This 177-nucleotide RNA was probed chemically with DMS and 2A3. Conditions: 150 mM KOAc, 10 mM MgCl2 and 150 mM bicine (pH 8.5), 24 C.
RNA sequence: GGGAACGACUCGAGUAGAGUCGAAAAAGGCGUGCUUUCCUUCUGGAUUUGAACCAUUGAGGAUCUACCUCUUAGGGUUUUGGCAACUAUUUCUCUAUCAUGUAAAGCCAGAGAUUGCAUUACGUCCACCAUGCCUACGGUUCGCCGUAGGCAUGGUAAAAGAAACAACAACAACAAC
Reactivity to DMS in 0.01 (KOAc 150mM, MgCl2 10mM, bicine 150mM(pH8.5), 24C), signal-to-noise 2, nucleotides 027 to 126: a040g040g010c130g040u000g000c040u000u000u000c060c140u020u000c040u000g000g020a220u000u000u010g000a060a020c120c040a210u010u000g010a080g020g020a210u000c150u000a140c000c020u000c020u000u000a080g000g000g020u000u010u000u010g020g000c150a100a110c100u010a060u000u000u000c040u010c040u010a080u010c070a070u000g020u000a050a080a170g010c000c020a010g000a100g000a050u010u000g000c010a080u000u010a080c070g030u000c010c110
Reactivity to 2A3 in 0.01 (KOAc 150mM, MgCl2 10mM, bicine 150mM(pH8.5), 24C), signal-to-noise 2, nucleotides 027 to 126: a000g030g020c000g000u030g010c020u000u000u040c000c000u040u020c020u030g100g000a140u030u040u130g030a050a030c050c060a100u000u070g000a000g020g000a020u060c090u140a200c010c000u000c000u020u050a040g040g000g020u010u030u040u050g020g010c010a080a030c070u080a100u050u140u030c040u000c010u010a110u060c030a060u090g080u170a060a030a060g040c010c010a000g000a000g010a020u000u030g000c000a030u000u180a050c020g000u000c050c010

Record summary:
For DMS, 1,409 sequencing reads were counted. The data come from the RNA Mapping Database (RMDB), library OK2TRN.